[RMDB]
RNA sequence: GGGAACGACUCGAGUAGAGUCGAAAAUUGCUGUCGCCCGCGCCGGAUCUCGCCGAUGACCUGGUUGUCGCGGAGCGCUCGCCGGUGUGUCGACCGGUGGCCGGGCUCGGCACCAAGGCCGCGCAGCCCAUAACGUGAGCUUCGGCUCACGUUAUGGAAAAGAAACAACAACAACAAC
Reactivity to DMS in 0.01 (KOAc 150mM, MgCl2 10mM, bicine 150mM(pH8.5), 24C), signal-to-noise 2, nucleotides 027 to 126: u030u020g050c050u010g000u030c060g000c020c040c020g030c090g010c010c010g050g000a130u010c100u030c200g000c010c050g050a020u020g000a150c010c000u000g030g010u010u000g010u010c010g000c070g000g000a210g000c020g040c060u040c110g010c020c010g000g000u000g050u000g020u030c050g030a040c040c010g010g020u020g000g000c030c010g000g000g000c040u000c010g000g000c030a170c090c150a190a120g030g000c000c050g000c030g000c010a080g010c120
Reactivity to 2A3 in 0.01 (KOAc 150mM, MgCl2 10mM, bicine 150mM(pH8.5), 24C), signal-to-noise 7, nucleotides 027 to 126: u100u070g010c030u050g120u230c070g030c040c090c060g030c070g000c010c020g050g030a090u060c080u090c160g010c020c010g010a030u080g070a250c010c020u060g020g040u070u100g120u160c050g010c050g140g090a100g030c050g000c010u030c030g030c010c010g040g010u060g010u040g080u140c050g100a030c000c000g010g000u030g030g010c000c000g020g000g000c020u010c000g000g010c000a010c010c050a030a060g040g000c000c020g000c010g000c010a010g000c000